This 207-nucleotide RNA was probed chemically with 2A3. The reactions ran in a buffer of 150 mM KOAc, 10 mM MgCl2 and 150 mM bicine (pH 8.5), at 24 C. Reactivities are rounded to 0.1 and cut off at 0 and 3. For 2A3, 589 sequencing reads were counted.

[RMDB]
RNA sequence: GGGAACGACUCGAGUAGAGUCGAAAACAGAUAAUGUAUCCAUAACCUGGCUGAUUCUCUUGGCCACCUUGUACAACAUUUUAGGCAAAAAUGAAGACACAUAUUCAAUUUGCCAAGAAAUGUUAGCCAUGUUUUGUCAGCAUUGUAUUCACAAUCAACUCCAGACAGAUUUCGAUCUGUCUGGAGUAAAAGAAACAACAACAACAAC
Reactivity to 2A3 in 0.01 (KOAc 150mM, MgCl2 10mM, bicine 150mM(pH8.5), 24C), signal-to-noise 2, nucleotides 027 to 156: c060a020g110a060u180a070a090u270g070u060a120u140c050c010a070u140a090a080c050c060u050g130g000c010u010g000a030u080u000c020u000c000u080u090g010g010c000c020a020c040c060u140u160g010u120a060c050a070a010c010a010u000u030u030u070a030g030g000c020a060a060a020a030a080u030g030a040a010g090a000c100a010c020a300u130a090u150u030c010a010a010u020u000u040g000c000c000a010a010g050a000a020a000u030g000u030u000a010g010c000c000a000u010g070u020u150u090u070g020u040c000a010g020c020a010u000u100g010u050a260u070u080c050a020c150a190a070u260c010a040